[RMDB]
RNA sequence: GGGAACGACUCGAGUAGAGUCGAAAAAGUGGCCAGGCUAAUCACCUGGGUAUGGACAUAACGUCGAGAGAUGAUACAAUGGGCUAUCCGCAUCCUUUCCCUUCAUACGCAUAGUAUAUGGAAAAGGUUCAGAGACUAAAUGGGAAUGGCUAGUUUACAUGGGCUAAAUGUUCGCAUUUAGCCCAUGAAAAGAAACAACAACAACAAC
Reactivity to DMS in 0.01 (KOAc 150mM, MgCl2 10mM, bicine 150mM(pH8.5), 24C), signal-to-noise 2, nucleotides 027 to 156: a060g000u010g000g020c000c020a040g030g070c000u000a090a120u010c070a050c000c010u010g000g010g000u000a060u000g000g010a090c030a060u010a070a120c150g000u000c030g000a140g010a210g010a070u000g010a110u000a090c070a090a110u000g010g020g030c010u000a110u040c030c060g000c050a080u010c010c010u010u000u000c000c000c000u120u000c110a010u000a010c000g000c150a140u010a140g020u000a030u000a050u000g000g010a030a020a000a020g010g030u010u000c040a020g010a150g010a070c040u000a020a110a120u000g000g000g010a030a070u020g010g030c020u000a040g000u000u000u010a160